[RMDB]
RNA sequence: GGGAACGACUCGAGUAGAGUCGAAAAGAUAUGGACUUAACCUAAUUGAUCGAUGAAUGGGAGCUGGCAUCGGAAACGAUGUCAGCAGCGAAGAACAUUAUCGAUCAAUUAGGUUAAGUCCUAAGUCCAUUAGGUGGUUGUUCGCAACCACCUAAUGAAAAGAAACAACAACAACAAC
Reactivity to DMS in 0.01 (KOAc 150mM, MgCl2 10mM, bicine 150mM(pH8.5), 24C), signal-to-noise 2, nucleotides 027 to 126: g020a100u000a300u010g030g000a030c000u020u000a010a010c000c000u000a010a010u000u000g010a010u000c000g010a000u000g000a010a000u000g030g000g000a270g020c020u000g010g000c000a010u000c000g000g000a140a110a280c010g010a010u000g010u010c000a010g000c010a020g030c180g020a210a120g010a220a280c000a000u000u010a030u000c020g000a020u000c000a010a000u000u000a000g000g030u000u000a000a000g010u030c000c000u000a020a100g000u000c030
This 177-nucleotide RNA was probed chemically with DMS. The RNA was probed in 150 mM KOAc, 10 mM MgCl2 and 150 mM bicine (pH 8.5) at 24 C. For DMS the reverse transcriptase was MarathonRT.